[RMDB]
RNA sequence: GGGAACGACUCGAGUAGAGUCGAAAAAUGAUACUUGGCUAUAGCAUCUGCCUCUCCUGAUGGGGUACAGGAGCAAAGACUGUUAAAGGGGGAUUGCUGGAUCAUACGGCAGUUCUUUUUUAGUUUUCUGAGGAAGCUCCAUGCUGUUCUCCAUAGAGCAAAAUAUUAAUUUCGAUUAAUAUUUUGCAAAAGAAACAACAACAACAAC
Reactivity to 2A3 in 0.01 (KOAc 150mM, MgCl2 10mM, bicine 150mM(pH8.5), 24C), signal-to-noise 2, nucleotides 027 to 156: a000u080g020a000u090a220c010u120u070g070g000c020u110a020u070a240g020c060a070u050c080u140g000c020c010u030c000u030c000c030u100g070a110u120g000g000g000g000u030a020c040a040g010g040a000g000c010a100a010a050g010a030c000u010g010u100u090a020a010a000g000g040g000g000g000a010u030u000g000c000u020g020g100a120u120c060a100u220a160c000g000g000c010a010g000u020u000c000u060u010u000u000u010u000a010g020u070u000u030u030c020u020g100a080g060g090a090a040g020c010u020c030c000a000u080g010c010u040g000u040u020c030u040c000c040a020u120a060g090a000
Reactivity to DMS in 0.01 (KOAc 150mM, MgCl2 10mM, bicine 150mM(pH8.5), 24C), signal-to-noise 1, nucleotides 027 to 156: a040u000g020a100u000a020c070u000u000g030g020c030u000a160u000a040g000c000a070u000c040u010g010c010c000u010c020u000c170c030u000g000a100u000g020g000g020g030u000a120c060a090g000g000a040g080c030a150a170a030g010a050c040u000g000u000u000a030a020a080g000g000g000g000g010a000u000u000g010c000u000g000g020a280u000c160a170u000a070c030g010g020c000a040g000u000u000c000u010u010u000u000u000u000a060g010u000u000u000u000c040u000g000a260g070g020a090a140g020c030u000c010c000a220u000g020c040u010g000u000u000c140u000c010c000a060u020a100g030a260